[RMDB]
RNA sequence: GGGAACGACUCGAGUAGAGUCGAAAACCACAGUGUUCGCACUGUGGAAAAACCGUAGGUACUUUUGACGAUCGAAGUGGACAAUGAUGUUCGAAAGAGUUGAGUCCAUUAGAUCGAUAAGUACCUAAACGGAAAAAGAGUAGCUUCGGCUACUCAACAACGAAUACAGAUUCGUCUGUAUUCGUUGAAAAGAAACAACAACAACAAC
Reactivity to 2A3 in 0.01 (KOAc 150mM, MgCl2 10mM, bicine 150mM(pH8.5), 24C), signal-to-noise 9, nucleotides 027 to 156: c010c000a000c000a010g000u010g080u100u180c220g090c100a010c010u000g000u030g010g010a100a030a010a030a010c010c010g010u010a010g000g000u010a000c010u040u120u110u180g250a110c040g000a000u000c010g010a060a020g010u000g000g020a010c020a070a150u220g050a060u140g170u150u090c040g090a150a110a080g050a050g020u050u120g020a020g020u000c000c000a010u140u070a010g000a000u000c000g000a000u000a000a000g000u010a000c000c000u000a010a050a000c010g010g060a090a050a020a070a020g010a000g000u000a000g000c000u060u060c300g070g000c000u000a000c000u000c000a000a010
Reactivity to DMS in 0.01 (KOAc 150mM, MgCl2 10mM, bicine 150mM(pH8.5), 24C), signal-to-noise 5, nucleotides 027 to 156: c000c010a010c010a020g030u000g010u010u010c300g050c020a030c010u020g030u000g010g010a010a040a040a100a080c010c000g030u000a030g010g030u000a000c010u020u000u000u000g010a270c140g000a020u010c000g020a210a300g020u000g010g010a010c000a090a130u000g020a080u000g010u000u000c010g010a100a100a250g000a070g020u000u000g010a170g010u000c000c000a040u000u000a300g000a000u000c010g000a080u000a010a010g020u000a000c000c000u000a000a020a060c030g030g010a060a040a090a120a180g000a030g000u000a010g020c000u010u000c300g050g000c000u000a010c000u000c000a040a120
This 207-nucleotide RNA was probed chemically with 2A3 and DMS. For DMS, 13,094 sequencing reads were counted. Conditions: 150 mM KOAc, 10 mM MgCl2 and 150 mM bicine (pH 8.5), 24 C.